[RMDB]
RNA sequence: GGGAACGACUCGAGUAGAGUCGAAAACGGGGGCCUGCCGCGGAGGCUCCCUCCGCCGCACUUCACGGAGGCCGCGGUCGGCCGGUGUCCGCCACUGCCGCCGCGAAGAGUUCGUCUCUGUCAGCCUCGGCGGCGGUGGGGAGCGAGAGGGCUCGUCGAAAUUAAUAUACUUCGGUAUAUUAAUUUCAAAAGAAACAACAACAACAAC
Reactivity to 2A3 in 0.01 (KOAc 150mM, MgCl2 10mM, bicine 150mM(pH8.5), 24C), signal-to-noise 1, nucleotides 027 to 156: c020g010g000g010g010g000c020c000u010g000c000c040g020c030g030g010a000g030g050c030u080c010c010c000u000c000c000g070c020c000g150c050a090c150u230u230c210a020c140g120g000a000g000g000c000c000g000c020g000g020u060c020g000g010c080c020g000g000u020g050u020c090c050g060c130c000a000c010u000g020c000c000g000c000c000g030c050g070a030a000g020a000g040u140u220c270g190u070c070u000c010u000g160u210c050a010g010c030c020u030c020g000g010c000g010g000c000g010g000u020g000g000g010g000a030g000c070g000a080g030a090g040g060g000c040u080c070g080u090c030
Chemical mapping of a 207-nucleotide RNA with 2A3. It was measured as part of the RMDB library ARCHII. For 2A3, 457 sequencing reads were counted.